Source: RMDB library OK2TST, as collected in RNAgym. Structure probing data (DMS and 2A3) for a 177-nucleotide construct. The RNA was probed in 150 mM KOAc, 10 mM MgCl2 and 150 mM bicine (pH 8.5) at 24 C. For DMS the reverse transcriptase was MarathonRT. High DMS reactivity at an A or C suggests that its Watson-Crick edge is free.
RNA sequence: GGGAACGACUCGAGUAGAGUCGAAAAGCUGUUUUCACUGAAGACAGUGACGUCAUUGUACAUGGCGCACCGGUGGUCCUCCGUGGGUUCUUCUCCAAAGGGCGGCAUGUGGUCGCGUACCGCCAGACCGGAUGAUUAUGUUCGCAUAAUCAUCCGGAAAAGAAACAACAACAACAAC
Reactivity to DMS in 0.01 (KOAc 150mM, MgCl2 10mM, bicine 150mM(pH8.5), 24C), signal-to-noise 3, nucleotides 027 to 126: g030c030u010g000u000u000u010u010c000a150c180u030g000a020a030g000a020c030a010g000u000g000a120c040g060u010c010a030u000u000g050u000a140c160a040u000g000g000c010g040c120a090c040c040g000g020u010g010g010u000c020c040u010c090c090g010u000g000g000g010u000u000c090u000u010c030u010c030c070a070a120a170g000g010g020c020g000g010c000a060u000g010u000g000g000u020c090g040c050g020u000a040c020c010g030c030c030a130g010a180
Reactivity to 2A3 in 0.01 (KOAc 150mM, MgCl2 10mM, bicine 150mM(pH8.5), 24C), signal-to-noise 2, nucleotides 027 to 126: g030c020u020g110u030u010u010u020c240a280c170u240g010a020a000g020a030c000a020g000u010g020a050c020g030u010c000a050u010u210g150u230a110c040a140u030g000g000c000g000c040a050c000c040g080g000u060g020g060u020c000c020u010c010c030g060u130g040g010g000u030u040c040u050u040c030u000c010c010a120a000a040g060g020g000c000g000g020c020a040u070g030u070g050g060u060c040g000c000g080u020a030c000c000g000c000c000a050g040a050
Reactivities are given for positions 27 through 126. For 2A3, 2,151 sequencing reads were counted.